[RMDB]
RNA sequence: GGGAACGACUCGAGUAGAGUCGAAAAUGAUGAGUCCGUCCGGGGUGAAGGUGGAGACGGCGCUGCAAGACGGCGACACGCUCGAUGGGCUUUUUACCGUGCUGCACACGCCGGGGCACGACGGCGCCAGAUGGCAGAGGUUCGCCUCUGCCAUCUGAAAAGAAACAACAACAACAAC
Reactivity to 2A3 in 0.01 (KOAc 150mM, MgCl2 10mM, bicine 150mM(pH8.5), 24C), signal-to-noise 1, nucleotides 027 to 126: u080g060a020u120g030a020g090u000c030c010g010u000c010c000g000g000g070g020u130g080a060a040g040g020u070g020g000a040g010a070c040g000g000c010g000c030u010g000c010a120a040g050a050c000g020g040c000g030a030c030a010c060g030c000u040c030g140a160u140g020g010g000c000u070u000u000u030u050a070c000c030g030u020g050c030u050g080c000a030c020a020c010g010c000c040g060g000g010g050c040a000c060g090a030c000g030g000c000g000c000
Reactivity to DMS in 0.01 (KOAc 150mM, MgCl2 10mM, bicine 150mM(pH8.5), 24C), signal-to-noise 2, nucleotides 027 to 126: u000g000a110u010g040a090g000u010c020c040g010u010c020c150g030g000g030g010u000g010a100a070g000g020u000g010g000a160g010a100c040g000g010c030g010c300u000g000c020a020a030g020a140c030g010g000c060g020a090c080a040c130g010c000u020c040g020a110u000g000g000g020c030u000u000u010u000u000a130c050c020g020u020g000c020u010g010c090a050c300a110c010g010c020c010g000g000g010g000c060a090c110g010a080c080g000g000c030g010c130
Structure probing data (2A3 and DMS) for a 177-nucleotide construct. 2A3 adducts were read by reverse transcription with SuperScript II with manganese. It was measured as part of the RMDB library OK2TST. For DMS the reverse transcriptase was MarathonRT.